Notes:
An RNA of 177 nucleotides, treated with 2A3 and read out base by base. Values cover nucleotides 27 to 126. The reactions ran in a buffer of 150 mM KOAc, 10 mM MgCl2 and 150 mM bicine (pH 8.5), at 24 C. High 2A3 reactivity points to a flexible backbone, as in loops and unpaired stretches.

RNA sequence: GGGAACGACUCGAGUAGAGUCGAAAAUGAGCCACGACAAUUCAAUGUCAUUAUUGAUGUCAUGUGAGCAUUGGUGGUCUGUCUUCAUGCUUCUUAAAAUCGCCAAUGUCUUGUGCGAUCGCUGUGCGCCAGCAGCCAUGUUCGCAUGGCUGCUGGCAAAAGAAACAACAACAACAAC
Reactivity to 2A3 in 0.01 (KOAc 150mM, MgCl2 10mM, bicine 150mM(pH8.5), 24C), signal-to-noise 2, nucleotides 027 to 126: u280g030a000g000c000c000a080c050g020a100c000a040a070u080u000c000a000a000u130g060u120c110a030u110u150a070u100u220g100a080u020g020u090c030a060u150g030u060g140a030g050c030a000u040u080g040g000u040g020g060u120c050u060g000u040c040u110u060c030a040u150g150c030u030u100c000u090u230a100a190a150a030u020c000g000c000c000a000a020u000g010u050c100u030u090g040u100g000c000g050a050u110c000g030c120u110g000u040g090c090